[RMDB]
RNA sequence: GGGAACGACUCGAGUAGAGUCGAAAAGUCUGACACCUGCCCGGUGCUGGAAGGUUAAAAGGAGUAGUUAUCUUCGGAGAAGCUAUGAAUUGAAGCCCCAGUAAACGGCGGCCGUAACUAUAACGGUGGUUAGAUUAUUGUUCGCAAUAAUCUAACCAAAAGAAACAACAACAACAAC
Reactivity to DMS in 0.01 (KOAc 150mM, MgCl2 10mM, bicine 150mM(pH8.5), 24C), signal-to-noise 2, nucleotides 027 to 126: g020u040c000u000g010a090c080a060c050c020u000g050c030c020c030g040g010u010g000c000u000g010g010a050a020g020g020u000u010a070a190a000a010g010g010a300g010u000a000g020u000u000a280u000c030u020u010c150g050g000a020g010a120a300g000c020u020a000u000g010a300a120u000u000g000a160a150g000c010c000c010c000a010g000u020a010a060a100c260g000g020c030g010g050c000c000g010u010a100a080c150u010a090u010a040a060c040g000g060u000
Reactivity to 2A3 in 0.01 (KOAc 150mM, MgCl2 10mM, bicine 150mM(pH8.5), 24C), signal-to-noise 2, nucleotides 027 to 126: g020u000c060u080g080a050c030a020c110c020u040g040c000c040c010g170g000u040g000c010u020g030g040a220a110g010g020u110u070a020a030a080a000g030g010a030g010u010a010g060u300u010a040u030c060u050u050c250g040g010a020g030a000a000g000c000u000a000u010g000a000a010u020u000g000a070a010g000c000c040c000c000a000g000u010a030a110a000c010g020g000c000g000g000c010c010g040u060a120a070c070u100a160u070a300a010c020g010g020u060